[RMDB]
RNA sequence: GGGAACGACUCGAGUAGAGUCGAAAAGUCCGUCGUUGUUCGGUGAUGUCUUCCAGGAGGACCAGAAUGUGGUCGAGCUCACCUUCGGGGGUGAGGACGCCUCGCUUCUGCACCUUCACGAUGCGGGGAAAGAAGGAAGGUUCGCCUUCCUUCUUUCAAAAGAAACAACAACAACAAC
Reactivity to 2A3 in 0.01 (KOAc 150mM, MgCl2 10mM, bicine 150mM(pH8.5), 24C), signal-to-noise 2, nucleotides 027 to 126: g050u020c020c030g030u030c020g000u080u280g020u100u040c070g020g020u000g040a200u100g020u000c000u020u030c040c070a130g100g110a020g000g030a080c010c000a000g080a110a060u150g030u030g020g040u100c040g010a060g080c000u010c010a020c050c000u070u140c300g300g020g010g000g010u000g000a010g010g070a020c020g020c000c010u050c030g020c070u050u040c010u010g000c020a040c020c000u040u060c000a020c030g040a020u050g030c080g030g050g050
Reactivity to DMS in 0.01 (KOAc 150mM, MgCl2 10mM, bicine 150mM(pH8.5), 24C), signal-to-noise 6, nucleotides 027 to 126: g010u010c020c000g020u010c040g020u000u010g010u000u010c230g020g010u010g010a120u010g010u000c030u010u000c020c160a220g010g010a050g000g010a050c100c020a030g010a040a030u020g020u000g010g010u010c010g010a160g000c010u000c010a010c010c010u000u000c300g020g020g010g000g010u000g000a010g010g010a170c170g010c010c010u010c030g020c110u000u000c010u000g000c060a080c020c010u000u000c060a060c050g000a040u000g000c090g000g000g000